[RMDB]
RNA sequence: GGGAACGACUCGAGUAGAGUCGAAAACCUAGACCGAGAGGUCCGGGUAAACCGCUGAACCGCUUUCAUGCUUGGGAUUGUGAACUGAAACUGUUCACAUGAACCUGCAUUGAUUACGUCCCUGCCCACGUUCCGUAGGCUUCGGCCUACGGAACGUAAAAGAAACAACAACAACAAC
Reactivity to 2A3 in 0.01 (KOAc 150mM, MgCl2 10mM, bicine 150mM(pH8.5), 24C), signal-to-noise 2, nucleotides 027 to 126: c000c000u000a060g000a020c010c020g020a030g050a120g130g010u000c000c010g000g020g000u060a060a040a000c050c040g020c060u070g100a050a030c070c000g080c000u080u110u020c000a020u020g010c000u040u110g010g000g010a000u000u000g000u000g000a000a000c000u010g030a160a000a130c170u120g000u000u010c000a040c020a000u000g000a010a100c000c010u010g000c000a010u000u210g030a020u020u160a040c010g030u010c010c010c000u010g030c000c010c010
Conditions: 150 mM KOAc, 10 mM MgCl2 and 150 mM bicine (pH 8.5), 24 C. This 177-nucleotide RNA was probed chemically with 2A3. 2A3 adducts were read by reverse transcription with SuperScript II with manganese. As a SHAPE reagent, 2A3 marks flexible, mostly unpaired nucleotides at the ribose 2'-OH.